The data come from the RNA Mapping Database (RMDB), library M2RFPK. This 207-nucleotide RNA was probed chemically with 2A3. The 2A3 profile rests on 664 reads. Conditions: 150 mM KOAc, 10 mM MgCl2 and 150 mM bicine (pH 8.5), 24 C.
[RMDB]
RNA sequence: GGGAACGACUCGAGUAGAGUCGAAAAUUUGACGCUGUUUUAUUGGCGCAAAGGUUUACGGAUAAACAACUAAUAAUUAAACCUUUUGUGUGCGAAACGUGGUUGUUUAACGUACUCUUUAAUCGCUUUGGGGAUGUGUCCUUCGGGACACAUCCAACUCUAUCGUACCCUUCGGGGUACGAUAGAGAAAAGAAACAACAACAACAAC
Reactivity to 2A3 in 0.01 (KOAc 150mM, MgCl2 10mM, bicine 150mM(pH8.5), 24C), signal-to-noise 2, nucleotides 027 to 156: u120u030u060g030a070c010g000c030u000g110u100u070u070u160a200u100u170g000g000c010g030c030a040a040a040g050g000u000u000u000a030c000g000g030a180u060a050a010a020c020a040a030c050u050a030a140u100a240a070u130u050a080a060a140c010c020u020u110u210u300g160u070g040u090g040c110g040a110a010a070c160g000u050g000g000u000u000g000u000u030u010a020a000c010g010u010a000c000u000c000u020u100u180a170a210u100c000g070c060u120u060u110g140g050g000g000a000u010g000u000g000u000c010c010u000u000c200g080g000g000a000c000a000c000a000u000c000c000a000a000